[RMDB]
RNA sequence: GGGAACGACUCGAGUAGAGUCGAAAAUGGUCGGAGUACGAGCAAUUACGUGACCAGUGUUUGGCUUGGAUUCGAGAUACGGAUAACAACCUUCAUGCUAUCGAUCUGAAGGAGGAUCUGCCGAAAAGCUCCAUCGUAAUUUCGAUUACGAUGGAGCAAAAGAAACAACAACAACAAC
Reactivity to 2A3 in 0.01 (KOAc 150mM, MgCl2 10mM, bicine 150mM(pH8.5), 24C), signal-to-noise 2, nucleotides 027 to 126: u080g030g000u030c010g030g100a260g050u050a010c060g080a050g150c090a190a110u150u020a060c050g000u050g030a010c030c000a030g030u050g150u100u050u020g030g000c000u000u010g080g060a040u040u010c020g000a000g000a070u130a170c020g000g040a020u040a140a040c030a000a080c010c000u010u010c020a060u100g000c050u110a040u270c110g080a080u000c010u030g000a000a020g000g010a010g030g010a020u010c020u090g080c030c020g030a060a030a010a030
Reactivity to DMS in 0.01 (KOAc 150mM, MgCl2 10mM, bicine 150mM(pH8.5), 24C), signal-to-noise 3, nucleotides 027 to 126: u000g000g000u000c000g000g000a300g010u010a070c080g010a130g000c150a130a100u030u010a060c030g050u020g000a020c030c020a040g000u050g010u000u000u000g020g000c040u000u010g000g000a080u010u000c030g000a080g020a160u000a220c050g030g010a040u010a080a080c100a090a130c020c020u000u010c030a070u010g040c090u000a040u000c170g010a050u010c090u000g010a050a070g000g000a170g000g000a060u010c040u010g000c040c030g000a030a080a040a230
An RNA of 177 nucleotides, treated with 2A3 and DMS and read out base by base. 2A3 adducts were read by reverse transcription with SuperScript II with manganese. Reactivities are rounded to 0.1 and cut off at 0 and 3. The data come from the RNA Mapping Database (RMDB), library OK2TST. The DMS profile rests on 1,959 reads.